[RMDB]
An RNA of 177 nucleotides, treated with DMS and 2A3 and read out base by base.
In probing experiments dimethyl sulfate is read out at A N1 and C N3, which are open when not base-paired.
Values cover nucleotides 27 to 126.
The RNA was probed in 150 mM KOAc, 10 mM MgCl2 and 150 mM bicine (pH 8.5) at 24 C.
RNA sequence: GGGAACGACUCGAGUAGAGUCGAAAAUUGUUAUCGGUAAUGGUGGUUCAAAUGGAAUUGAUACGGCAUUCUAUUCGCGAAAUGCUACACAAGAUAUUAAGAUUUCAACUUUCGAUUUCACGUUUGGAGAUUAUCGGUAGUUCGCUACCGAUAAUCUAAAAGAAACAACAACAACAAC
Reactivity to DMS in 0.01 (KOAc 150mM, MgCl2 10mM, bicine 150mM(pH8.5), 24C), signal-to-noise 3, nucleotides 027 to 126: u010u000g000u000u010a020u020c020g000g040u010a050a040u010g010g030u000g010g000u000u000c050a030a100a120u010g000g010a080a090u000u010g010a100u010a040c190g000g000c070a040u010u000c050u010a080u030u020c130g060c100g000a040a030a060u010g000c050u000a090c120a090c090a040a060g010a130u020a070u020u040a070a130g000a020u000u010u010c060a030a070c120u010u000u000c030g000a060u020u000u010c060a100c080g010u020u000u020g010g050
Reactivity to 2A3 in 0.01 (KOAc 150mM, MgCl2 10mM, bicine 150mM(pH8.5), 24C), signal-to-noise 7, nucleotides 027 to 126: u040u060g030u010u010a050u040c040g000g090u060a110a070u070g080g030u030g010g060u090u080c040a060a070a090u180g070g040a050a110u100u060g030a050u070a120c080g030g000c010a000u010u000c020u100a170u100u130c050g000c000g130a020a040a040u080g010c010u110a030c070a010c020a040a080g050a130u120a060u100u140a130a060g020a070u030u040u050c030a040a030c020u030u040u050c030g030a030u050u080u070c070a080c070g040u030u060u110g150g020